Structure probing data (2A3 and DMS) for a 177-nucleotide construct. The data come from the RNA Mapping Database (RMDB), library OK2TST. For 2A3 the reverse transcriptase was SuperScript II with manganese.
RNA sequence: GGGAACGACUCGAGUAGAGUCGAAAAGUAAGAAUGCCCUGCUUUCUGCAUCUCUGUUUCAGAAGACCAAGAGGGUGACUUACCAGACUGAGUAUUUCUGGGGACAAUACAAGUACCUGGGCAUGAAGGCUCGUGUAAGAUUCGUCUUACACGAGCCAAAAGAAACAACAACAACAAC
Reactivity to 2A3 in 0.01 (KOAc 150mM, MgCl2 10mM, bicine 150mM(pH8.5), 24C), signal-to-noise 1, nucleotides 027 to 126: g020u020a050a010g020a100a080u060g000c000c000c010u060g060c010u060u050u030c050u070g060c020a090u000c060u020c040u060g290u150u140u120c060a050g020a110a030g010a090c040c030a070a000g030a020g130g030g020u020g030a000c020u020u000a020c000c020a010g070a040c020u140g090a030g120u070a030u000u030u040c030u050g020g000g010g000a020c060a020a090u130a060c050a020a080g030u000a040c030c020u020g000g010g000c000a020u190g040a090a040
Reactivity to DMS in 0.01 (KOAc 150mM, MgCl2 10mM, bicine 150mM(pH8.5), 24C), signal-to-noise 1, nucleotides 027 to 126: g050u000a020a060g010a140a040u010g030c010c020c000u010g000c000u000u000u010c070u000g030c200a030u020c070u000c040u000g030u090u000u000c130a030g040a070a040g000a140c200c130a140a040g000a060g030g000g000u000g000a120c090u000u000a010c010c040a120g000a070c100u000g010a090g020u000a110u000u000u000c070u010g020g010g010g030a140c180a030a040u010a020c110a050a090g010u030a150c050c070u020g000g030g040c080a060u000g000a140a080